[RMDB]
The record gives the reactivity of an RNA of 177 nucleotides to DMS and 2A3.
RNA sequence: GGGAACGACUCGAGUAGAGUCGAAAAGCUCUAUCCUUCGGGAUAGAGCAAACGCUACGAUUGACGGUGAAGCCGGACCUGAGGUUCAGCAUAGUCGGCCUAAAAGUCACAUGUUCGCAUGUGACAACGUUGAUAUACCCUUCGGGGUAUAUCAACGAAAAGAAACAACAACAACAAC
Reactivity to DMS in 0.01 (KOAc 150mM, MgCl2 10mM, bicine 150mM(pH8.5), 24C), signal-to-noise 2, nucleotides 027 to 126: g010c000u000c050u000a000u000c000c010u010u020c210g010g010g000a010u010a000g000a000g010c010a010a060a030c110g020c030u000a090c070g000a130u020u020g010a080c070g020g010u000g000a070a240g010c030c010g050g000a020c020c020u010g010a110g040g000u010u000c010a040g020c050a090u000a150g010u000c010g000g010c020c030u010a040a050a090a120g000u000c000a010c010a000u010g010u000u000c170g010c000a010u000g000u000g000a010c000a030a040
Reactivity to 2A3 in 0.01 (KOAc 150mM, MgCl2 10mM, bicine 150mM(pH8.5), 24C), signal-to-noise 2, nucleotides 027 to 126: g010c020u000c010u000a010u020c010c000u020u100c180g150g010g000a010u010a020g000a000g010c000a000a000a000c020g010c050u180a040c010g150a160u080u120g060a040c000g060g000u020g050a080a020g040c000c020g040g010a050c000c060u150g120a070g110g000u060u050c010a010g000c000a000u000a020g050u030c010g040g000c020c010u110a120a100a030a030g010u020c000a000c010a010u010g030u030u050c220g000c100a000u000g000u010g000a010c000a010a010

The DMS profile rests on 2,094 reads. It was measured as part of the RMDB library M2PK50. 2A3 adducts were read by reverse transcription with SuperScript II with manganese.